Source information:
Conditions: 150 mM KOAc, 10 mM MgCl2 and 150 mM bicine (pH 8.5), 24 C. Structure probing data (DMS and 2A3) for a 177-nucleotide construct.
RNA sequence: GGGAACGACUCGAGUAGAGUCGAAAAUUGGCUUAUGUGAUUGAAGAGACUUGGCAAGCCCGAUAUCUCCAGGGUAGACCAGAAGGCUGGAGACCCAGGGAAGAGCUGAUGCUGCAGCUCAAGCCCAUAAAUAGGCUAAUUUCGAUUAGCCUAUUUAAAAAGAAACAACAACAACAAC
Reactivity to DMS in 0.01 (KOAc 150mM, MgCl2 10mM, bicine 150mM(pH8.5), 24C), signal-to-noise 9, nucleotides 027 to 126: u010u010g010g010c020u000u010a050u010g000u010g000a100u010u010g010a090a070g010a130g000a070c070u010u010g010g010c050a080a120g010c030c010c040g010a090u030a120u010c030u000c010c020a080g000g000g020u020a100g010a120c050c040a080g000a120a090g010g010c010u000g000g000a060g000a080c060c030c050a130g000g000g000a060a100g000a020g010c010u000g000a090u020g010c120u010g000c010a010g010c000u000c010a050a090g000c000c000c010a130
Reactivity to 2A3 in 0.01 (KOAc 150mM, MgCl2 10mM, bicine 150mM(pH8.5), 24C), signal-to-noise 9, nucleotides 027 to 126: u060u050g040g000c020u100u050a090u130g090u050g080a150u100u100g020a100a040g080a020g030a100c040u050u050g040g030c030a050a030g020c000c030c000g040a030u030a070u140c040u020c010c020a020g020g040g070u080a050g070a100c010c020a030g050a180a040g120g030c020u010g010g000a020g020a020c010c010c020a050g000g000g000a040a050g000a010g010c010u010g010a070u160g060c090u080g040c010a000g000c000u000c010a010a050g010c000c000c000a020
DMS adducts were read by reverse transcription with MarathonRT.